[RMDB]
This 207-nucleotide RNA was probed chemically with 2A3.
For 2A3 the reverse transcriptase was SuperScript II with manganese.
Conditions: 150 mM KOAc, 10 mM MgCl2 and 150 mM bicine (pH 8.5), 24 C.

RNA sequence: GGGAACGACUCGAGUAGAGUCGAAAACAAUUUGAAGACAUGGUACAGGGCAUCGAUCCCUUCUUCUCACCUGGGCUUGCCUUUGUGUUGUUCCUUUCAGGAGAGUGGGCAAAUGACCUGCGGCACGGCCAUGGCGUAUACUACUACAUCAAUAAUAUAAAUUACCGUCGUUCGCGACGGUAAUUUAAAAAGAAACAACAACAACAAC
Reactivity to 2A3 in 0.01 (KOAc 150mM, MgCl2 10mM, bicine 150mM(pH8.5), 24C), signal-to-noise 1, nucleotides 027 to 156: c030a030a160u130u010u190g140a040a000g010a020c000a000u040g000g020u110a040c040a030g000g000g000c000a070u070c100g080a050u000c050c020c000u060u010c020u030u010c010u000c010a070c030c040u040g000g010g000c040u030u050g070c020c000u180u130u060g100u000g030u000u000g020u020u080c000c020u050u050u130c190a000g010g010a050g040a020g020u050g000g000g110c000a000a140a220u090g050a050c010c000u000g000c010g020g080c060a000c000g020g000c020c000a000u020g010g000c010g000u060a070u000a200c050u000a020c000u090a050c070a030u140c030a070a100u270a180a000u300a060